The record gives the reactivity of an RNA of 207 nucleotides to DMS and 2A3. For 2A3, 2,701 sequencing reads were counted. Reactivities are given for positions 27 through 156. The RNA was probed in 150 mM KOAc, 10 mM MgCl2 and 150 mM bicine (pH 8.5) at 24 C. 2A3 adducts were read by reverse transcription with SuperScript II with manganese. The data come from the RNA Mapping Database (RMDB), library OK3TST.
RNA sequence: GGGAACGACUCGAGUAGAGUCGAAAACAGUCUUGUAAAAUGCAAGUGAGCAGUCUGUCAUGGUCCUUGACAGGGACUGUUUGUGACUUAUCACUCCAUGCGGUUUGGGACCUGGGAAAAUGUUUAGAGAUCUUGAGAACAGGUUAGAGAGGAUUGAUACCCGUUUUAUAUUCGUAUAAAACGGGUAAAAAGAAACAACAACAACAAC
Reactivity to DMS in 0.01 (KOAc 150mM, MgCl2 10mM, bicine 150mM(pH8.5), 24C), signal-to-noise 4, nucleotides 027 to 156: c040a090g030u000c000u000u010g010u010a040a080a050a090u000g030c010a140a090g000u010g010a110g020c050a070g020u000c010u000g010u010c090a060u000g010g010u000c030c040u000u000g020a190c170a220g030g000g010a040c010u000g010u010u000u000g030u010g010a050c050u000u000a120u000c060a070c020u000c020c050a090u000g030c020g010g010u000u000u010g000g020g020a050c020c030u000g020g020g010a070a070a080a090u010g020u000u000u000a090g010a140g020a060u000c040u000u010g010a150g010a070a120c050a040g010g000u000u000a050g000a160g020a060g010g010a090u000u000g000a300
Reactivity to 2A3 in 0.01 (KOAc 150mM, MgCl2 10mM, bicine 150mM(pH8.5), 24C), signal-to-noise 3, nucleotides 027 to 156: c010a010g020u010c010u060u110g090u140a040a090a060a080u100g000c020a050a070g050u040g080a030g020c010a000g030u030c010u090g060u050c020a020u050g050g010u050c010c030u100u060g030a050c060a030g050g000g000a020c010u000g010u010u020u040g030u020g010a030c010u070u110a060u170c020a020c010u000c020c020a040u120g030c030g000g040u050u060u050g050g010g000a010c000c000u020g030g000g020a020a040a030a030u120g050u070u150u120a070g010a010g000a050u030c020u040u080g020a060g010a070a010c000a040g020g000u040u040a010g040a000g000a000g020g060a030u030u110g030a030